[RMDB]
RNA sequence: GGGAACGACUCGAGUAGAGUCGAAAAAAUCGCGUUUAUCCCGUGAUGAUACUGUGGCGUAUGCAGUUCGUGAGGGUAAGUUGGACGCACAAUUGGCCUCAGCUAUGCAACGCUUGCCUACAAGCGCACAAGGAGCAAUAAGGAAAGUAGUAGGUAACUAAAUCACGCCGUUCGCGGCGUGAUUUAGAAAAGAAACAACAACAACAAC
Reactivity to 2A3 in 0.01 (KOAc 150mM, MgCl2 10mM, bicine 150mM(pH8.5), 24C), signal-to-noise 2, nucleotides 027 to 156: a000a000u090c050g010c040g000u040u050u040a070u080c000c000c010g000u050g050a050u000g010a000u030a180c030u000g000u050g070g020c090g110u080a040u140g030c000a000g010u020u030c010g020u030g080a150g020g000g070u090a070a020g020u070u060g050g060a030c010g010c050a040c020a080a120u130u130g120g020c000c000u030c000a020g000c050u090a030u210g050c030a010a010c000g000c010u000u020g020c000c000u010a010c020a120a150g040c020g020c080a050c050a080a000g090g050a080g090c020a040a160u240a190a030g080g010a060a040a070g060u120a010g000u000a000g010g010u000a010a000